[RMDB]
RNA sequence: GGGAACGACUCGAGUAGAGUCGAAAACACGAACGUUGGCUAAUCCUGGUCGGACAUCAGGGGGUUAGUGCAGUGGCAUAAGCCAACUUGGCGCUAAUAGAUACUAAUCGUAGCAUAGCUGAAUAAAGCGGUAUUUAUCAUUCGUGAUAAAUACCGCAAAAGAAACAACAACAACAAC
Reactivity to DMS in 0.01 (KOAc 150mM, MgCl2 10mM, bicine 150mM(pH8.5), 24C), signal-to-noise 3, nucleotides 027 to 126: c060a150c220g000a040a060c140g010u000u000g020g000c050u000a090a060u020c050c010u010g000g000u000c240g000g000a200c210a020u000c040a000g040g000g010g000g050u030u000a020g000u000g010c030a170g020u000g010g000c020a160u040a120a060g000c010c000a040a050c040u000u030g010g070c010g020c000u000a020a020u020a070g010a080u010a060c120u030a030a090u010c070g000u010a020g040c060a110u020a070g000c020u020g010a100a080u020a120a140a080
Reactivity to 2A3 in 0.01 (KOAc 150mM, MgCl2 10mM, bicine 150mM(pH8.5), 24C), signal-to-noise 4, nucleotides 027 to 126: c070a020c010g080a140a030c050g050u010u030g040g000c010u060a030a030u020c000c000u010g000g030u080c120g090g070a050c010a040u010c010a020g040g000g000g040g000u030u050a020g000u010g000c000a020g000u010g060g030c030a110u090a300a080g000c010c000a030a060c040u040u070g100g000c040g000c010u020a020a000u060a190g120a060u060a110c010u080a110a060u090c080g050u040a010g030c030a080u070a030g030c040u050g040a110a050u180a090a080a010

An RNA of 177 nucleotides, treated with DMS and 2A3 and read out base by base.
The 2A3 profile rests on 2,733 reads.
The RNA was probed in 150 mM KOAc, 10 mM MgCl2 and 150 mM bicine (pH 8.5) at 24 C.
DMS (dimethyl sulfate) methylates the pairing face of unpaired adenines and cytosines.
Reactivities are given for positions 27 through 126.